[RMDB]
RNA sequence: GGGAACGACUCGAGUAGAGUCGAAAAACGGAUUACGAUCCGAAGUGAUGAAUUUAGUUAUCAAUUAUGGUUAGAACAAACAUGAUUUCCGUGAUUAUCAAUUAUAACUAGGGCGAACUGACUAAAAUAAAGGGGAGGGAUUCGUCCCUCCCCUUUAAAAAGAAACAACAACAACAAC
Reactivity to DMS in 0.01 (KOAc 150mM, MgCl2 10mM, bicine 150mM(pH8.5), 24C), signal-to-noise 1, nucleotides 027 to 126: a080c000g020g030a020u010u000a070c040g040a030u000c000c000g000a110a050g000u000g000a060u000g020a060a080u000u030u000a010g000u020u000a000u010c150a030a040u000u010a060u000g000g000u010u030a020g000a060a040c130a020a050a060c150a050u010g030a200u000u010u020c080c050g000u000g000a020u020u000a070u010c130a050a160u040u010a000u020a030a000c030u010a040g000g000g000c070g000a030a060c040u000g000a160c060u000a040a110a000a080

This 177-nucleotide RNA was probed chemically with DMS. The RNA was probed in 150 mM KOAc, 10 mM MgCl2 and 150 mM bicine (pH 8.5) at 24 C. It was measured as part of the RMDB library RFM100. Reactivities are given for positions 27 through 126. For DMS the reverse transcriptase was MarathonRT.